[RMDB]
RNA sequence: GGGAACGACUCGAGUAGAGUCGAAAAACUUUACUUUUUGAAGUGUCCUGCGCGCCCACGACAGCCCUUGAAAAUCCUGGCUAGAGAUUUAUUCGCACCCUCGUUCGUACUCAUAACCGCAUCAGGUCCUGUUUCUAGCUUUCGAGCUAGAAACAGGAAAAGAAACAACAACAACAAC
Reactivity to 2A3 in 0.01 (KOAc 150mM, MgCl2 10mM, bicine 150mM(pH8.5), 24C), signal-to-noise 1, nucleotides 027 to 126: a010c020u040u120u000a060c040u000u040u030u200u300g120a070a010g030u000g060u100c000c020u030g010c010g020c000g000c000c000c000a020c060g040a000c050a000g000c000c000c030u020u020g040a150a000a000a110u030c010c020u000g020g000c040u040a010g000a000g000a010u060u200u010a180u110u050c000g000c120a070c000c000c000u030c030g000u000u000c010g040u070a000c040u030c040a080u050a100a020c080c050g010c020a080u060c070a050g050g130u040